RNA sequence: GGGAACGACUCGAGUAGAGUCGAAAAGAUAUGGAACUGGUGUGGAGGAGUUCGGAAACGAAUACUCCUAUGAAGCACCGGUUCCUAAGUCAAAACUCUUCUACGCCGUUCGCGGCGUAGAAGAGAAUCUUUGUAAGAAGUUCGCUUCUUACAAAGAAAAAGAAACAACAACAACAAC
Reactivity to DMS in 0.01 (KOAc 150mM, MgCl2 10mM, bicine 150mM(pH8.5), 24C), signal-to-noise 2, nucleotides 027 to 126: g000a030u000a300u000g000g000a010a020c000u000g010g020u000g020u000g010g000a000g010g010a030g000u000u000c010g000g000a120a070a260c000g010a050a120u030a050c000u000c000c000u000a210u040g000a130a230g000c000a000c000c000g000g010u000u000c000c000u000a020a070g010u000c060a080a120a090a160c000u000c010u000u010c000u010a000c000g000c000c020g000u010u020c270g020c000g010g020c020g010u000a000g000a000a010g000a000g000a050a030
Reactivity to 2A3 in 0.01 (KOAc 150mM, MgCl2 10mM, bicine 150mM(pH8.5), 24C), signal-to-noise 1, nucleotides 027 to 126: g020a020u060a040u120g000g000a000a010c000u000g000g040u000g010u000g020g020a010g030g000a000g000u010u020c000g000g030a130a060a040c010g000a020a010u130a300c000u050c020c000u130a300u060g010a010a000g030c000a000c000c000g010g000u000u000c000c000u010a010a000g000u020c020a000a030a110a170c000u030c000u010u000c000u000a010c000g000c010c000g060u110u130c300g030c060g170g070c040g000u010a000g000a010a010g000a000g000a000a000